This 177-nucleotide RNA was probed chemically with DMS and 2A3. The 2A3 profile rests on 13,116 reads.

RNA sequence: GGGAACGACUCGAGUAGAGUCGAAAAGAUAUGGAGGAUAAAAGUCUUCAUCGAUCCCGGUAUGGGUGGCGUCGGAAACGACGCGUAACAUCCCAUACCGGGGGAGAAGUCGCUAUCCUCCUAAGUCGUAAGGUAAACAGUUCGCUGUUUACCUUACAAAAGAAACAACAACAACAAC
Reactivity to DMS in 0.01 (KOAc 150mM, MgCl2 10mM, bicine 150mM(pH8.5), 24C), signal-to-noise 5, nucleotides 027 to 126: g010a120u000a300u010g010g020a030g010g010a010u000a020a120a190a230g020u000c000u000u000c010a300u000c150g000a090u010c010c010c000g000g000u000a000u000g010g000g030u000g010g000c000g010u000c010g010g000a080a120a250c000g010a010c000g010c010g010u010a040a130c150a030u010c000c000c010a000u000a010c000c000g010g000g010g000g000a050g010a020a010g020u000c050g010c300u000a010u000c010c000u000c000c000u000a010a100g000u000c120
Reactivity to 2A3 in 0.01 (KOAc 150mM, MgCl2 10mM, bicine 150mM(pH8.5), 24C), signal-to-noise 3, nucleotides 027 to 126: g060a010u130a060u210g000g000a000g020g000a000u020a070a300a090a170g050u030c010u020u010c020a220u300c030g030a030u040c020c000c000g020g010u000a010u000g010g000g000u020g030g010c000g000u000c020g010g020a020a090a110c010g000a010c000g000c000g000u000a010a020c010a260u240c000c000c000a000u000a010c000c000g000g000g000g000g000a020g000a000a000g000u000c000g000c130u030a000u000c000c000u000c000c000u010a140a010g060u020c070
Background
The DMS profile rests on 6,688 reads. DMS adducts were read by reverse transcription with MarathonRT.